[RMDB]
RNA sequence: GGGAACGACUCGAGUAGAGUCGAAAAUAAGCGUUCUAUCUCCUUAAACAUUCAUCGUCUUGUACACGAUGGUUGUUUAAGGAGCUGAAACGCUAAAAAGGCAUCUGUCGUUUCGACGACAGAUGCCCUUGUGAACAUUGUUCGCAAUGUUCACAAGAAAAGAAACAACAACAACAAC
Reactivity to 2A3 in 0.01 (KOAc 150mM, MgCl2 10mM, bicine 150mM(pH8.5), 24C), signal-to-noise 4, nucleotides 027 to 126: u180a030a000g000c000g010u010u010c030u040a050u020c000u010c000c000u010u000a010a010a000c000a010u080u080c000a000u020c000g050u010c020u100u200g100u170a030c030a000c060g000a000u000g000g000u000u000g000u000u000u000a000a000g000g000a000g000c000u000g000a010a000a000c000g000c000u010a060a040a010a000a000g010g000c010a010u000c000u000g000u010c010g000u020u030u110c220g100a020c000g000a000c010a000g000a000u000g000c000c000
Reactivity to DMS in 0.01 (KOAc 150mM, MgCl2 10mM, bicine 150mM(pH8.5), 24C), signal-to-noise 5, nucleotides 027 to 126: u010a090a040g010c000g010u000u000c010u000a040u000c000u000c000c000u000u000a000a000a010c000a010u000u000c000a010u000c000g000u000c020u010u020g010u010a170c300a020c000g000a010u000g010g000u000u000g000u000u000u000a000a010g000g010a000g010c070u000g000a030a010a000c010g020c010u000a000a050a060a110a080g010g000c000a000u000c000u000g000u000c000g030u000u000u010c220g000a030c000g010a010c000a010g010a000u000g000c010c000
The record gives the reactivity of an RNA of 177 nucleotides to 2A3 and DMS.
2A3 adducts were read by reverse transcription with SuperScript II with manganese.
The data come from the RNA Mapping Database (RMDB), library RFMREP.
The DMS profile rests on 10,307 reads.
The 2A3 profile rests on 15,480 reads.
The reactions ran in a buffer of 150 mM KOAc, 10 mM MgCl2 and 150 mM bicine (pH 8.5), at 24 C.